[RMDB]
RNA sequence: GGGAACGACUCGAGUAGAGUCGAAAAAGAUCGAUUACGAUCGAUCAAUGAUGCCCCUCACCCACCUCUGAAGAUCCCAGGUGGGCGAGGGAACAGAGCACGGGAUCACGAGCAGUACGCUGCUCGAAAAAGAACUAGACCUUCGGGUCUAGUUCAAGAAAUGAAAGGUGUUCGCACCUUUCAUUUCAAAAGAAACAACAACAACAAC
Reactivity to 2A3 in 0.01 (KOAc 150mM, MgCl2 10mM, bicine 150mM(pH8.5), 24C), signal-to-noise 2, nucleotides 027 to 156: a010g000a000u010c000g000a000u040u130a110c240g040a020u010c000g000a000u000c010a010a090u130g100a040u160g090c010c000c010c000u000c000a010c000c000c000a000c000c000u050c050u120g070a100a040g000a020u010c010c000c000a000g000g000u000g000g000g000c010g000a000g000g000g000a010a030c060a000g150a030g050c120a030c230g000g000g010a000u000c020a010c030g000a000g000c000a010g020u050a040c230g020c100u000g000c000u000c000g010a010a000a000a010a000g000a000a000c000u000a000g010a000c000c010u010u090c200g050g000g000u000c000u000a000g000u000u000c000a010a000
Reactivity to DMS in 0.01 (KOAc 150mM, MgCl2 10mM, bicine 150mM(pH8.5), 24C), signal-to-noise 1, nucleotides 027 to 156: a150g010a030u000c010g020a110u010u000a150c150g000a140u000c000g000a100u000c010a300a130u010g030a160u020g010c090c030c000c030u000c010a040c000c000c010a010c000c030u000c030u010g020a210a120g000a140u000c040c000c030a130g010g010u000g000g010g050c000g030a000g000g030g030a030a010c060a050g000a080g030c110a070c060g030g010g030a080u020c040a220c030g000a020g000c050a060g010u000a080c210g030c020u010g010c010u000c020g010a010a090a070a090a060g000a030a000c000u000a010g010a000c000c000u010u000c300g090g090g000u020c000u000a000g040u000u000c010a050a090
Structure probing data (2A3 and DMS) for a 207-nucleotide construct. For 2A3, 2,793 sequencing reads were counted. For DMS the reverse transcriptase was MarathonRT. The data come from the RNA Mapping Database (RMDB), library M2RFPK.